[RMDB]
Source: RMDB library OK2TRN, as collected in RNAgym. Structure probing data (2A3 and DMS) for a 177-nucleotide construct. The 2A3 profile rests on 1,374 reads. 2A3 adducts were read by reverse transcription with SuperScript II with manganese. The RNA was probed in 150 mM KOAc, 10 mM MgCl2 and 150 mM bicine (pH 8.5) at 24 C.
RNA sequence: GGGAACGACUCGAGUAGAGUCGAAAACAAUCGCCCACAACGUAGGGCCGCAGCGCCGCCAGCACGGAGGCAUCGUCGCGAGCGGCACCGACCCCCACCAGACACCCGUCCGCGUCGACAGCCGCGACACUCAGACCCAAUUCGUUGGGUCUGAGUGAAAAGAAACAACAACAACAAC
Reactivity to 2A3 in 0.01 (KOAc 150mM, MgCl2 10mM, bicine 150mM(pH8.5), 24C), signal-to-noise 1, nucleotides 027 to 126: c030a020a100u180c090g070c000c070c000a020c070a090a000c110g130u120a150g030g000g040c000c010g000c000a080g000c000g050c000c100g000c040c010a050g060c070a040c120g110g060a130g020g070c040a070u120c040g070u050c030g030c030g020a120g060c000g070g060c040a030c040c000g000a020c030c000c000c000c000a030c000c030a040g030a080c020a090c020c000c020g050u100c010c020g020c020g000u030c020g010a050c080a040g000c000c000g020c030g010a000
Reactivity to DMS in 0.01 (KOAc 150mM, MgCl2 10mM, bicine 150mM(pH8.5), 24C), signal-to-noise 2, nucleotides 027 to 126: c100a140a140u000c300g040c000c000c000a080c110a090a020c220g010u030a090g010g000g010c010c040g000c090a210g010c040g020c030c100g010c060c020a120g070c080a090c130g020g010a110g000g000c060a130u010c080g000u010c040g010c010g020a210g030c000g000g000c020a020c000c010g000a200c020c030c040c000c000a080c140c090a130g000a100c080a110c050c030c050g000u010c030c060g010c060g000u000c050g030a100c100a090g030c030c030g020c100g000a150